[RMDB]
The data come from the RNA Mapping Database (RMDB), library TTRDES. This 177-nucleotide RNA was probed chemically with DMS and 2A3. DMS adducts were read by reverse transcription with MarathonRT.
RNA sequence: GGGAACGACUCGAGUAGAGUCGAAAAGAUAUGGAUCGUCCACGGCUCGAAGAACAUCAUCGGAAACGAUGAUGGGAGAGCGUGGCGAUCCUAAGUCAAAUCCUGGAGAUCUUCGGAUCUCCAGGAACUAUCAGGUAUCCUUCGGGAUACCUGAUAGAAAAGAAACAACAACAACAAC
Reactivity to DMS in 0.01 (KOAc 150mM, MgCl2 10mM, bicine 150mM(pH8.5), 24C), signal-to-noise 3, nucleotides 027 to 126: g010a040u010a300u000g000g010a000u000c020g000u020c000c010a100c050g040g010c020u000c000g020a150a180g030a150a210c000a000u000c000a000u000c000g010g000a100a070a170c000g000a010u000g000a020u000g000g000g000a090g000a020g040c020g010u010g000g000c010g010a010u010c000c000u000a020a050g010u010c020a150a130a160u010c000c000u010g000g000a000g010a020u000c000u000u010c270g030g000a000u000c000u000c000c000a000g000g000a000a030
Reactivity to 2A3 in 0.01 (KOAc 150mM, MgCl2 10mM, bicine 150mM(pH8.5), 24C), signal-to-noise 4, nucleotides 027 to 126: g000a010u050a030u090g000g000a000u000c010g280u230c060c010a040c070g300g050c070u030c040g300a300a060g000a060a010c000a010u000c000a000u010c000g040g000a080a030a020c020g010a010u010g000a000u000g000g000g030a050g010a010g050c030g020u050g000g000c010g000a000u000c000c010u020a020a000g010u000c030a070a050a210u040c000c000u010g040g000a010g000a000u010c030u100u290c300g120g010a000u000c010u000c000c010a000g000g000a000a010
For DMS, 3,942 sequencing reads were counted.